[RMDB]
RNA sequence: GGGAACGACUCGAGUAGAGUCGAAAAGAUAUGGAUUCGAGUAAAUUGCGCUACGAAGGUUGACACCAUCGGAAACGAUGGUGAGAACAACCUUCGUAGAACUACGCACUAUAGCGAAUCCUAAGUCCAGAAGGCGUAAGUUCGCUUACGCCUUCUGAAAAGAAACAACAACAACAAC
Reactivity to DMS in 0.01 (KOAc 150mM, MgCl2 10mM, bicine 150mM(pH8.5), 24C), signal-to-noise 1, nucleotides 027 to 126: g000a030u000a300u000g030g020a030u000u000c000g000a230g040u000a230a180a140u000u000g040c020g000c020u010a030c000g010a020a020g000g000u010u020g020a150c000a010c010c000a000u010c000g010g000a130a010a160c000g010a000u000g000g000u000g000a080g030a060a080c030a000a000c000c000u030u000c000g010u000a000g030a050a030c220u030a300c050g000c030a070c280u000a250u030a090g020c000g040a030a010u000c000c000u000a020a170g000u000c030

The data come from the RNA Mapping Database (RMDB), library TTRINS.
Structure probing data (DMS) for a 177-nucleotide construct.
DMS adducts were read by reverse transcription with MarathonRT.
For DMS, 814 sequencing reads were counted.